Chemical mapping of a 177-nucleotide RNA with 2A3 and DMS. For DMS, 753 sequencing reads were counted. Values are in units of 0.01, from 0 to 300, in steps of 10. The 2A3 profile rests on 883 reads. The reactions ran in a buffer of 150 mM KOAc, 10 mM MgCl2 and 150 mM bicine (pH 8.5), at 24 C.

RNA sequence: GGGAACGACUCGAGUAGAGUCGAAAAUACAGCGCAAUUUACUGGUAAAAAUGGAAUAAUAUGGCACACUCUUAUUAGCUAUGAUCUAUAUUCACUGUUCAUAUCGUGAUUUGCAUAUCAAGCUGAACAUACCUCCACCCUUCGGGGUGGAGGUAUGAAAAGAAACAACAACAACAAC
Reactivity to 2A3 in 0.01 (KOAc 150mM, MgCl2 10mM, bicine 150mM(pH8.5), 24C), signal-to-noise 1, nucleotides 027 to 126: u080a000c030a000g020c070g000c060a020a000u100u060u050a070c040u100g020g010u040a070a030a000a000a000u090g030g000a010a020u080a080a030u070a040u070g040g000c050a010c000a040c040u080c030u100u120a130u090u060a040g010c020u040a100u160g000a050u100c040u080a050u030a050u210u020c010a050c060u030g040u180u070c050a000u040a020u130c010g030u000g030a040u010u070u130g000c040a000u050a050u160c030a020a020g050c010u060g050a040a020
Reactivity to DMS in 0.01 (KOAc 150mM, MgCl2 10mM, bicine 150mM(pH8.5), 24C), signal-to-noise 1, nucleotides 027 to 126: u020a130c070a050g000c050g050c050a060a020u020u010u020a080c040u020g000g010u000a030a070a170a070a030u040g010g040a070a140u010a070a110u000a070u000g010g010c050a100c050a040c050u010c110u010u010a050u000u010a040g010c070u000a050u000g000a010u000c070u000a070u000a100u000u000c090a050c030u000g000u000u000c100a150u010a040u010c080g000u000g010a050u000u000u010g030c150a060u020a040u000c050a050a060g000c030u000g000a040a260